[RMDB]
RNA sequence: GGGAACGACUCGAGUAGAGUCGAAAAGAUAUGGAAUACAACGAUAAGCAGCGGUCGGAAACGACCGGCUGCUUUUGACGUUGUUCCUAAGUCAAAAUCUCGCUUUGAGUUCGCUCAAAGCGAGAAACACCGAGAGUAAGUUCGCUUACUCUCGGUGAAAAGAAACAACAACAACAAC
Reactivity to DMS in 0.01 (KOAc 150mM, MgCl2 10mM, bicine 150mM(pH8.5), 24C), signal-to-noise 2, nucleotides 027 to 126: g010a070u010a300u010g000g000a060a020u010a120c000a010a030c000g000a140u000a010a040g000c000a010g030c000g010g010u000c000g000g000a090a100a210c010g020a010c010c000g020g020c000u000g010c000u000u000u000u000g010a120c090g000u000u000g000u010u010c000c000u000a070a150g000u010c030a080a070a090a130u010c000u000c010g020c000u000u000u010g000a020g020u000u010c210g010c020u000c010a020a000a020g010c000g000a010g010a020a060a120
Reactivity to 2A3 in 0.01 (KOAc 150mM, MgCl2 10mM, bicine 150mM(pH8.5), 24C), signal-to-noise 1, nucleotides 027 to 126: g030a020u050a050u140g040g030a050a120u200a240c010a050a000c010g050a050u040a070a000g030c000a020g000c040g000g000u040c050g020g100a150a110a080c000g000a000c000c000g030g000c020u000g020c000u010u000u010u000g080a010c000g010u000u020g000u010u000c000c000u010a100a070g080u040c060a070a020a140a300u000c020u000c000g000c000u010u000u000g000a000g030u080u110c280g080c060u000c000a000a040a000g010c010g020a000g010a020a010a000
The record gives the reactivity of an RNA of 177 nucleotides to DMS and 2A3. The RNA was probed in 150 mM KOAc, 10 mM MgCl2 and 150 mM bicine (pH 8.5) at 24 C. For 2A3, 1,551 sequencing reads were counted. Source: RMDB library TTRDEL, as collected in RNAgym.